Source: RMDB library OK2TST, as collected in RNAgym. Chemical mapping of a 177-nucleotide RNA with DMS and 2A3. The reactions ran in a buffer of 150 mM KOAc, 10 mM MgCl2 and 150 mM bicine (pH 8.5), at 24 C. For 2A3, 2,676 sequencing reads were counted. The DMS profile rests on 2,329 reads. As a SHAPE reagent, 2A3 marks flexible, mostly unpaired nucleotides at the ribose 2'-OH. For 2A3 the reverse transcriptase was SuperScript II with manganese.
RNA sequence: GGGAACGACUCGAGUAGAGUCGAAAAUGUCCAGACUGUUCUGUAACGCACUCCUUGUUUGGGAGCGACACACAUCUCCCACGCCAGCCAGACAGCCCCCUGGACACAGAGGUGCAUGCUGUCAUCCCCUUGACAGAAGUUUCGACUUCUGUCAAGGAAAAGAAACAACAACAACAAC
Reactivity to DMS in 0.01 (KOAc 150mM, MgCl2 10mM, bicine 150mM(pH8.5), 24C), signal-to-noise 3, nucleotides 027 to 126: u000g000u010c020c000a040g020a140c070u000g000u000u010c040u000g000u010a130a110c190g040c050a110c070u000c060c040u000u020g000u000u010u000g040g000g020a030g040c180g000a080c140a060c200a040c090a110u010c030u000c000c010c010a090c140g000c020c050a180g000c140c010a080g000a030c030a040g000c030c030c060c110c020u020g000g020a060c160a100c110a040g000a050g000g010u000g020c070a050u010g000c050u010g000u000c060a120u000c030c070
Reactivity to 2A3 in 0.01 (KOAc 150mM, MgCl2 10mM, bicine 150mM(pH8.5), 24C), signal-to-noise 2, nucleotides 027 to 126: u050g030u000c020c010a000g020a090c040u040g050u220u050c000u030g100u120a110a050c060g030c050a060c080u080c010c010u090u110g070u110u080u100g020g010g000a010g000c030g130a020c010a010c010a010c000a220u040c000u000c020c010c000a000c000g010c000c010a030g020c000c000a020g000a050c000a020g010c010c000c030c010c020u000g010g010a010c040a000c010a060g060a050g020g040u070g020c040a050u080g000c020u050g040u110c020a070u080c010c040